The record gives the reactivity of an RNA of 177 nucleotides to 2A3 and DMS. DMS adducts were read by reverse transcription with MarathonRT. It was measured as part of the RMDB library OK1LIB. Conditions: 150 mM KOAc, 10 mM MgCl2 and 150 mM bicine (pH 8.5), 24 C. Reactivities are given for positions 27 through 126.
RNA sequence: GGGAACGACUCGAGUAGAGUCGAAAAGAUUACGUGUCGUUGUGGAAUCGAUACUACGCACGAGAUUCCAAGGUCUCUGUAGUACGUCCGCCGGUGACGUCUUUGGAGUCACGUUCGAUAUACGAAAGGUAUCUACAACCUUCGGGUUGUAGAUACCAAAAGAAACAACAACAACAAC
Reactivity to 2A3 in 0.01 (KOAc 150mM, MgCl2 10mM, bicine 150mM(pH8.5), 24C), signal-to-noise 1, nucleotides 027 to 126: g100a060u100u180a080c060g030u100g070u040c020g000u010u020g050u030g060g010a080a080u020c030g000a000u000a010c080u050a030c000g000c000a010c060g010a000g030a010u060u000c160c010a050a020g060g030u000c000u040c070u170g030u060a030g000u050a020c020g000u010c000c060g000c020c020g070g030u080g010a000c010g110u060c020u070u030u060g020g020a030g020u040c010a010c070g000u020u010c010g000a070u040a060u040a110c060g110a000a000a100
Reactivity to DMS in 0.01 (KOAc 150mM, MgCl2 10mM, bicine 150mM(pH8.5), 24C), signal-to-noise 1, nucleotides 027 to 126: g000a220u050u090a030c070g000u010g040u000c010g020u010u000g050u000g010g010a060a110u000c000g040a110u010a040c050u000a030c000g000c240a080c070g000a070g000a000u000u010c020c100a040a000g000g000u000c010u000c030u010g010u020a060g010u000a000c000g000u020c010c000g000c020c030g010g020u000g010a010c040g000u040c000u000u010u070g000g000a040g000u030c010a030c090g000u000u020c020g000a060u000a060u030a020c050g000a030a030a070